This 177-nucleotide RNA was probed chemically with 2A3 and DMS. The reactions ran in a buffer of 150 mM KOAc, 10 mM MgCl2 and 150 mM bicine (pH 8.5), at 24 C. It was measured as part of the RMDB library OK2TST. 2A3 adducts were read by reverse transcription with SuperScript II with manganese.
[RMDB]
RNA sequence: GGGAACGACUCGAGUAGAGUCGAAAAACAACUACGAGGAAGAUGAACUCGCUAGCCUACAGAAAGACCUCGCUGAGUUAUGUAAAUUUGCUAUAUUUGGUAGAGAGGUUUGUCCUACUACUGGAAACUCGACCACUAAUUUCGAUUAGUGGUCGAGAAAAGAAACAACAACAACAAC
Reactivity to 2A3 in 0.01 (KOAc 150mM, MgCl2 10mM, bicine 150mM(pH8.5), 24C), signal-to-noise 1, nucleotides 027 to 126: a000c030a010a040c020u100a050c000g010a010g140g040a070a070g120a200u180g070a120a070c050u000c030g000c020u000a040g070c000c010u070a040c010a010g170a100a110a000g060a010c000c000u000c000g000c000u030g040a010g020u040u090a050u160g070u030a100a280a300u190u140u080g000c030u080a080u000a080u220u010u080g000g050u080a010g010a010g000a010g230g040u070u090u110g040u000c000c000u000a100c010u040a030c040u020g010g100a000a000a000
Reactivity to DMS in 0.01 (KOAc 150mM, MgCl2 10mM, bicine 150mM(pH8.5), 24C), signal-to-noise 2, nucleotides 027 to 126: a070c080a130a150c110u000a090c060g010a040g010g040a200a150g020a120u010g050a100a190c040u000c050g000c060u010a080g020c100c070u000a130c170a120g000a040a120a050g000a100c010c000u000c070g000c020u010g000a090g010u000u000a040u020g000u020a020a060a140u010u010u000g020c040u000a070u000a040u030u010u000g010g020u000a040g000a100g000a010g000g000u010u010u020g000u000c000c010u000a060c060u000a030c080u000g000g010a010a100a150
Source information:
For DMS the reverse transcriptase was MarathonRT.